[RMDB]
RNA sequence: GGGAACGACUCGAGUAGAGUCGAAAAAUCACCGGUGGGGAACCCCAUACGGCAACGGCGUAGAAGUAAAUGCUAACCAAUCCGUGGUAUCUACGCGACGGAGCAUCCACGGAUAAGUCUAACAAGGCUAAGCGUCUCGGUUUCGACCGAGACGCAACGAUGUUUGCUGAUUCGUCAGCAAACAUCGAAAAGAAACAACAACAACAAC
Reactivity to 2A3 in 0.01 (KOAc 150mM, MgCl2 10mM, bicine 150mM(pH8.5), 24C), signal-to-noise 2, nucleotides 027 to 156: a000u040c010a010c020c000g000g010u000g010g010g040g090a080a120c110c020c010c000a030u140a190c030g010g060c130a130a030c040g000g000c020g000u020a000g010a050a010g000u030a000a010a030u100g030c110u130a060a090c090c000a160a060u010c000c000g000u000g000g000u010a030u010c000u000a000c000g010c020g080a060c090g110g030a000g000c000a010u030c000c000a000c000g000g010a000u010a000a010g000u000c010u070a130a040c100a190a050g010g000c030u070a000a070g000c020g000u000c020u000c010g010g020u020u120u120c190g090a060c010c000g000a010g000a000c010g000c000a000a000